About this RNA:
The data come from the RNA Mapping Database (RMDB), library M2RFPK. An RNA of 207 nucleotides, treated with 2A3 and DMS and read out base by base.
RNA sequence: GGGAACGACUCGAGUAGAGUCGAAAAUCCACUAUGAAUCUAGUCACUAAAUAAACACAAUUAGCUACUGUGUGUAAUAGUGAGUGUUGAUAACACAAAAUAAUAGUAUAUUUUUGGAAGAUUAUACGCGCCCUUGCUCCGUUCGCGGAGCAAGGAACAAUCUAAGUAAUUUCGAUUACUUAGAUUGAAAAGAAACAACAACAACAAC
Reactivity to 2A3 in 0.01 (KOAc 150mM, MgCl2 10mM, bicine 150mM(pH8.5), 24C), signal-to-noise 4, nucleotides 027 to 156: u000c020c010a030c050u170a160u220g200a120a040u020c070u090a050g100u020c010a000c000u010a010a010a060u040a040a060a000c000a010c010a000a080u110u080a090g060c050u140a080c090u030g000u000g000u000g000u020a020a020u000a030g010u010g000a020g020u030g010u030u080g110a150u220a250a010c010a000c010a020a170a070a050u220a080a070u100a180g030u020a070u040a060u140u050u020u060u080g090g030a100a060g000a100u090u060a030u080a090c060g030c000g060c070c000c020u000u000g000c000u000c010c000g030u040u060c150g010c010g110g010a000g000c000a000a000g010g000a000a000
Reactivity to DMS in 0.01 (KOAc 150mM, MgCl2 10mM, bicine 150mM(pH8.5), 24C), signal-to-noise 2, nucleotides 027 to 156: u000c010c010a130c100u000a150u000g000a130a110u000c070u000a130g020u000c030a010c020u000a000a030a110u000a150a240a020c000a020c010a020a060u000u000a250g010c180u000a050c070u000g060u000g000u010g000u000a100a300u000a020g040u000g020a060g000u010g010u000u010g010a140u000a080a120c050a100c010a050a030a050a110u000a060a230u010a200g000u000a140u000a030u000u020u000u000u020g000g010a160a120g020a090u000u000a090u020a040c030g040c070g010c100c000c000u000u000g030c020u010c010c010g030u010u000c280g040c020g010g000a020g000c000a000a000g030g000a050a040